Annotation:
Source: RMDB library OK3TST, as collected in RNAgym. This 207-nucleotide RNA was probed chemically with DMS and 2A3. 2A3 adducts were read by reverse transcription with SuperScript II with manganese. DMS adducts were read by reverse transcription with MarathonRT. In probing experiments dimethyl sulfate is read out at A N1 and C N3, which are open when not base-paired. The DMS profile rests on 5,123 reads. The RNA was probed in 150 mM KOAc, 10 mM MgCl2 and 150 mM bicine (pH 8.5) at 24 C.
RNA sequence: GGGAACGACUCGAGUAGAGUCGAAAAGGCAUUGUCUUACCUUGGGGGAAGGAAACAAAACCAAUGGGAAAACAGUUUCUGUAAAUAAUAAACCUUGAAAGACAAAUGCUCACCUAGUGGCCAGGAGGUGCGCUCUGUCUGGUUGAGAGCAAUGGGAAUUUUAAUACGUGUUCGCACGUAUUAAAAUAAAAGAAACAACAACAACAAC
Reactivity to DMS in 0.01 (KOAc 150mM, MgCl2 10mM, bicine 150mM(pH8.5), 24C), signal-to-noise 2, nucleotides 027 to 156: g020g010c010a070u000u010g000u000c030u000u010a090c050c050u000u010g010g020g000g030g000a130a220g010g010a050a030a050c030a030a080a110a120c020c010a070a100u000g010g020g000a130a080a100a090c100a170g000u000u000u000c010u000g010u000a070a080a110u000a080a120u000a090a100a200c000c030u020u000g000a120a040a030g000a030c010a030a060a070u000g010c000u000c040a110c020c010u000a050g020u000g020g030c070c040a130g000g000a060g000g030u010g010c130g010c000u000c050u000g000u000c040u000g010g000u000u010g010a070g010a060g010c020a060a100u010g000g010g000a070
Reactivity to 2A3 in 0.01 (KOAc 150mM, MgCl2 10mM, bicine 150mM(pH8.5), 24C), signal-to-noise 3, nucleotides 027 to 156: g020g000c010a020u020u040g010u030c010u010u070a130c050c030u050u040g020g000g020g020g020a010a080g030g030a040a050a020c030a010a130a050a040c050c020a110a220u170g020g000g050a040a110a020a040c030a060g030u020u030u000c020u030g060u110a070a100a080u120a090a070u070a090a130a060c010c000u020u070g070a120a010a000g000a020c010a000a170a060u050g000c020u040c040a060c000c000u040a060g070u090g100g010c030c010a030g050g010a030g000g030u030g060c040g000c050u040c020u030g060u030c010u010g010g060u060u060g040a040g010a000g020c030a060a050u070g000g000g040a030